[RMDB]
RNA sequence: GGGAACGACUCGAGUAGAGUCGAAAAGGGUAUGCUGCCUGCGCCGAAGGGGAAACGGUUCACGAUGACCGAACAACAGACCCUGCUGUCUCAUGGCGUGGCAACGGCGUAUGUCGAAAGCGGGGUAGGCUGGUAAAUAGUUCGCUAUUUACCAGCCAAAAGAAACAACAACAACAAC
Reactivity to 2A3 in 0.01 (KOAc 150mM, MgCl2 10mM, bicine 150mM(pH8.5), 24C), signal-to-noise 2, nucleotides 027 to 126: g030g030g000u060a010u070g000c030u060g000c020c000u070g000c030g010c000c000g050a070a020g040g000g000g020a000a070a030c030g000g060u040u040c100a050c210g120a140u190g000a010c010c030g010a040a020c030a040a000c010a030g050a140c000c000c000u000g040c000u070g040u030c000u010c080a080u180g030g000c030g010u010g020g000c040a060a010c010g040g000c000g010u070a080u080g080u110c020g020a050a010a000g010c050g010g000g000g020u080a080
Reactivity to DMS in 0.01 (KOAc 150mM, MgCl2 10mM, bicine 150mM(pH8.5), 24C), signal-to-noise 3, nucleotides 027 to 126: g010g000g010u000a060u000g050c020u000g020c030c030u020g050c080g010c010c010g030a130a160g010g000g010g050a070a090a130c040g020g030u000u000c120a110c270g000a090u000g030a020c020c000g010a120a050c130a070a070c190a080g000a090c030c000c010u000g000c060u000g000u000c080u000c020a050u010g000g010c000g010u010g000g020c050a050a110c080g010g000c010g000u010a050u000g000u000c070g020a060a120a060g020c070g000g000g000g000u000a120
Chemical mapping of a 177-nucleotide RNA with 2A3 and DMS. Values cover nucleotides 27 to 126.